[RMDB]
RNA sequence: GGGAACGACUCGAGUAGAGUCGAAAAUCCUUUGUCGAUAGAGAUUGGAGUCAUACAACCCCAGAAACCAUUCCUUAUACCUUGAGUAUUGCUGAAUUCAGUUUAGCGUGCAUGCUCUUGGCUAUUCAUACCAAGGACAACUUCGGUUGUCCUUGAACACUCAGACUGUCUUCGGACAGUCUGAGUGAAAAGAAACAACAACAACAAC
Reactivity to DMS in 0.01 (KOAc 150mM, MgCl2 10mM, bicine 150mM(pH8.5), 24C), signal-to-noise 1, nucleotides 027 to 156: u010c010c030u010u000u000g000u000c030g040a270u010a100g000a110g010a120u000u000g010g000a090g010u030c050a140u000a120c060a030a060c030c010c030c000a120g000a160a180a090c060c060a150u010u000c010c020u000u010a150u010a020c000c030u010u000g000a000g030u000a030u000u000g000c030u040g010a060a070u000u010c190a180g030u020u000u010a060g030c040g000u010g010c050a160u000g010c010u000c030u000u000g030g000c030u010a040u010u010c130a150u010a040c100c040a050a040g000g000a020c000a010a000c000u000u010c300g060g000u000u000g040u000c000c010u000u010g000a050a110
Reactivity to 2A3 in 0.01 (KOAc 150mM, MgCl2 10mM, bicine 150mM(pH8.5), 24C), signal-to-noise 2, nucleotides 027 to 156: u050c030c000u000u000u120g090u070c020g020a080u070a190g120a020g010a000u030u120g050g000a030g030u060c070a030u080a100c120a060a210c040c010c020c020a020g150a010a000a030c020c000a050u030u130c000c000u110u090a070u050a220c000c000u000u000g000a010g000u050a050u160u070g010c000u040g040a140a080u210u090c050a040g150u040u090u160a100g010c060g040u060g020c030a000u010g010c010u000c000u010u000g000g000c000u040a020u030u150c040a040u040a150c020c010a000a000g000g030a000c000a000a000c000u030u050c130g080g000u000u000g000u000c000c000u000u000g000a010a000